[RMDB]
Structure probing data (DMS) for a 177-nucleotide construct. Reactivities are given for positions 27 through 126. It was measured as part of the RMDB library TTRINS.
RNA sequence: GGGAACGACUCGAGUAGAGUCGAAAAGAUAUGGAGUCGCUAACUGCGCUGGGUGUAAGGUAUACACUAUUCGGAAACGAAUAGUGUAUACUUGAGCCCAGAACUACGCAGAGGCGACUCCUAAGUCCAUUGUCCCAACGUUCGCGUUGGGACAAUGAAAAGAAACAACAACAACAAC
Reactivity to DMS in 0.01 (KOAc 150mM, MgCl2 10mM, bicine 150mM(pH8.5), 24C), signal-to-noise 2, nucleotides 027 to 126: g000a040u000a300u000g000g000a010g010u020c020g000c000u000a030a300c000u000g000c030g000c020u000g010g010g010u000g000u040a300a040g020g000u000a000u000a000c000a000c000u000a000u000u000c000g010g000a110a220a160c000g000a020a000u000a000g020u000g020u000a000u000a010c000u000u040g010a300g000c000c010c000a020g000a010a030c100u030a300c000g000c020a030g000a300g000g000c000g000a010c000u000c000c000u000a010a170g010u010c020